This 177-nucleotide RNA was probed chemically with 2A3 and DMS. DMS adducts were read by reverse transcription with MarathonRT. It was measured as part of the RMDB libraries RFM100 and RFMREP.

[RMDB]
RNA sequence: GGGAACGACUCGAGUAGAGUCGAAAAUGGCGACGUAUUCUUUUACCCAGAUUCACGGCCCGGACAUCUCGUCCAUCACGGCUCGCCCAAUCAGGCCAGCCGUGGCCGCCGACCCUACAGGGUUGCGUUCACACCCUGAUUUCGAUCAGGGUGUGAAAAAAGAAACAACAACAACAAC
Reactivity to 2A3 in 0.01 (KOAc 150mM, MgCl2 10mM, bicine 150mM(pH8.5), 24C), signal-to-noise 4, nucleotides 027 to 126: u100g040g020c040g010a050c010g030u040a070u030u070c020u020u040u030u060a070c020c000c010a020g030a140u090u100c060a010c060g010g000c040c080c050g010g000a010c010a100u140c130u090c220g010u000c000c010a020u060c000a000c000g000g000c000u000c010g000c010c010c000a110a210u160c070a020g010g020c010c020a000g000c000c000g000u000g000g040c030c010g020c010c010g030a030c000c000c000u050a080c050a050g010g000g000u000u040g010c010g010
Reactivity to DMS in 0.01 (KOAc 150mM, MgCl2 10mM, bicine 150mM(pH8.5), 24C), signal-to-noise 3, nucleotides 027 to 126: u000g020g000c060g000a010c030g010u040a040u020u000c020u030u010u000u010a090c050c000c050a170g000a080u000u010c090a130c030g010g020c020c300c110g000g040a050c010a060u010c170u050c190g000u000c010c020a180u050c020a020c030g000g000c010u000c300g000c030c000c120a080a150u030c300a170g000g040c010c040a000g000c020c000g020u000g020g000c200c120g000c030c020g010a070c010c000c070u010a110c160a130g000g000g000u010u000g000c080g020
For 2A3, 4,315 sequencing reads were counted. 2A3 adducts were read by reverse transcription with SuperScript II with manganese.